[RMDB]
RNA sequence: GGGAACGACUCGAGUAGAGUCGAAAAACCUUGUGGUUCCUGUGGGUCACCCCGCCCCACGGAAUAAUAAAAGCAGAGGAGUAGAGAGUACUCACCUGUCGUCGCUCGACGAAGGCCGGUGAGCAGACCUAAUAGUCUUGUUCGCAAGACUAUUAGGAAAAGAAACAACAACAACAAC
Reactivity to 2A3 in 0.01 (KOAc 150mM, MgCl2 10mM, bicine 150mM(pH8.5), 24C), signal-to-noise 4, nucleotides 027 to 126: a000c010c000u020u060g160u030g070g040u020u020c020c050u090g010u060g010g000g000u010c040a170c020c020c000c000g020c020c000c000c000a010c000g010g000a010a020u140a070a010u050a020a060a020a000g010c040a020g030a050g110g020a010g050u140a020g110a020g020a020g090u040a070c000u000c000a010c000c000u000g010u010c000g010u000c000g010c030u170c140g300a300c010g000a110a010g010g020c010c010g010g000u010g010a000g000c040a000g030a060
Reactivity to DMS in 0.01 (KOAc 150mM, MgCl2 10mM, bicine 150mM(pH8.5), 24C), signal-to-noise 5, nucleotides 027 to 126: a060c010c010u000u000g020u010g010g020u000u000c000c000u010g050u000g010g000g000u000c050a240c040c000c000c010g010c230c000c010c000a010c020g000g000a030a020u010a070a090u010a060a080a080a130g010c040a060g010a080g010g010a090g020u000a070g010a120g010a110g010u010a090c000u000c000a010c000c000u000g010u000c010g000u000c010g010c040u020c250g000a120c000g010a020a030g000g000c000c060g010g000u000g000a030g020c080a060g000a160